[RMDB]
RNA sequence: GGGAACGACUCGAGUAGAGUCGAAAACCGCAUGCCCAGGUGGCCGCGAUCUUCAAGGCUACGCCGCGGAUAGGUCCGCGCUGAUCGUUUUCCUCCAACGACGCUAUGGCGUCUUUCCUUCACCCGCAAAAUCGUCUCCCGUUCGCGGGAGACGAAAGAAUCUAUUAACGUUCGCGUUAAUAGAUUCAAAAGAAACAACAACAACAAC
Reactivity to DMS in 0.01 (KOAc 150mM, MgCl2 10mM, bicine 150mM(pH8.5), 24C), signal-to-noise 1, nucleotides 027 to 156: c010c020g000c040a140u010g000c050c000c020a220g000g020u010g000g000c000c060g060c050g040a020u000c020u000u000c080a050a130g010g000c000u000a040c020g030c080c020g040c020g000g020a160u010a080g010g020u010c010c020g040c060g110c010u010g010a100u000c020g000u000u030u050u020c000c020u000c050c040a100a120c010g010a010c020g040c010u000a110u000g050g010c010g040u000c040u010u000u000c060c010u000u000c040a100c000c000c000g050c090a050a090a110a160u010c020g000u000c020u010c010c000c000g040u000u000c220g030c070g000g020g000a030g010a000c010g000a000a040a140
Reactivity to 2A3 in 0.01 (KOAc 150mM, MgCl2 10mM, bicine 150mM(pH8.5), 24C), signal-to-noise 4, nucleotides 027 to 156: c010c010g020c060a060u100g010c000c000c000a020g050g010u010g030g010c010c000g070c020g060a060u030c020u100u070c060a050a030g040g000c010u020a040c040g000c010c030g020c010g000g020a040u120a120g130g070u020c000c000g000c000g000c070u060g050a070u030c020g030u020u020u090u070c030c000u030c020c010a040a040c050g030a010c010g000c020u060a090u290g120g010c010g010u000c000u010u040u020c010c000u060u070c040a080c040c000c010g050c050a030a060a020a180u030c000g000u000c000u000c010c000c000g010u050u030c130g010c010g090g000g000a000g000a000c000g000a010a000a000

An RNA of 207 nucleotides, treated with DMS and 2A3 and read out base by base.
The reactions ran in a buffer of 150 mM KOAc, 10 mM MgCl2 and 150 mM bicine (pH 8.5), at 24 C.
2A3 adducts were read by reverse transcription with SuperScript II with manganese.
It was measured as part of the RMDB library M2RFPK.
The DMS profile rests on 3,031 reads.